An RNA of 207 nucleotides, treated with 2A3 and read out base by base. The reactions ran in a buffer of 150 mM KOAc, 10 mM MgCl2 and 150 mM bicine (pH 8.5), at 24 C. The 2A3 profile rests on 667 reads.
[RMDB]
RNA sequence: GGGAACGACUCGAGUAGAGUCGAAAAAAGAACGUCGCGAUGACGUAAGGUGGGACUUUUCCUUCCGGAACCUAGCGGUUGGUUCCGAGGGGGGUGUGAUCCAGGUACCGCCGUAGAAACUGGAUUACGACGUCUACCCGGGAUUCAAACCCGGUCCGUGUAGUCGAUUCUUCGGAAUCGACUACACAAAAGAAACAACAACAACAAC
Reactivity to 2A3 in 0.01 (KOAc 150mM, MgCl2 10mM, bicine 150mM(pH8.5), 24C), signal-to-noise 1, nucleotides 027 to 156: a000a000g120a040a010c010g030u070c000g010c070g200a110u290g000a010c000g040u010a010a020g090g000u120g010g040g000a020c020u080u040u020u190c010c000u070u000c010c010g000g000a000a000c030c030u030a070g100c080g110g000u070u090g040g000u000u000c000c000g000a130g010g000g010g000g000g000u020g000u030g000a000u020c000c000a000g010g020u020a020c020c010g070c000c010g000u080a060g070a010a180a000c000u010g010g000a000u000u040a020c040g010a000c010g090u000c010u080a130c000c010c000g060g000g000a110u300u260c130a030a080a080c030c030c000g000g060u030c020c070